Chemical mapping of a 207-nucleotide RNA with 2A3 and DMS. 2A3 adducts were read by reverse transcription with SuperScript II with manganese. For 2A3, 2,850 sequencing reads were counted. For DMS the reverse transcriptase was MarathonRT.
RNA sequence: GGGAACGACUCGAGUAGAGUCGAAAAGGCGUUCGAGAGGCCCUCUCAUUAAUGCGGAGGUGUCACGCUGACAGAAUGAUAUUAGAUGUCCGCUUCCGGUUGCAUCGCGGCGAUGAUUACAUAGGACAUCGAUUACCCAUUAGCUUCGGGGAAGCAAACGAGGUAUUUUAUUCGUAAAAUACCUCGUAAAAGAAACAACAACAACAAC
Reactivity to 2A3 in 0.01 (KOAc 150mM, MgCl2 10mM, bicine 150mM(pH8.5), 24C), signal-to-noise 5, nucleotides 027 to 156: g030g000c020g020u030u050c040g140a060g010a070g160g000c000c020c000u000c010u000c010a190u170u300a190a130u180g030c100g020g000a010g020g010u180g020u070c020a010c060g030c010u010g010a020c020a080g110a100a070u090g040a050u070a090u170u180a060g010a020u020g010u010c000c020g020c070u110u020c060c000g050g020u050u050g010c030a050u060c050g020c080g170g050c080g020a040u040g020a040u100u180a050c080a080u170a120g000g010a000c000a000u010c020g000a000u000u050a050c000c000c000a040u110u110a020g030c020u060u050c050g090g000g030g010a020a000g000c000a140a020
Reactivity to DMS in 0.01 (KOAc 150mM, MgCl2 10mM, bicine 150mM(pH8.5), 24C), signal-to-noise 3, nucleotides 027 to 156: g010g010c040g030u000u000c080g010a140g010a120g030g030c010c010c000u000c000u000c050a230u000u010a090a150u010g010c100g030g010a040g040g000u010g010u000c040a070c050g000c040u010g010a230c080a110g010a070a080u000g010a130u000a090u000u000a100g010a050u000g010u000c010c010g000c070u010u000c060c040g010g010u010u010g020c010a120u000c110g040c060g030g020c070g030a050u000g000a130u010u000a100c070a110u010a110g010g010a030c010a030u000c000g000a100u000u000a080c010c000c010a140u000u000a190g020c060u010u000c070g000g020g020g000a100a120g000c040a090a160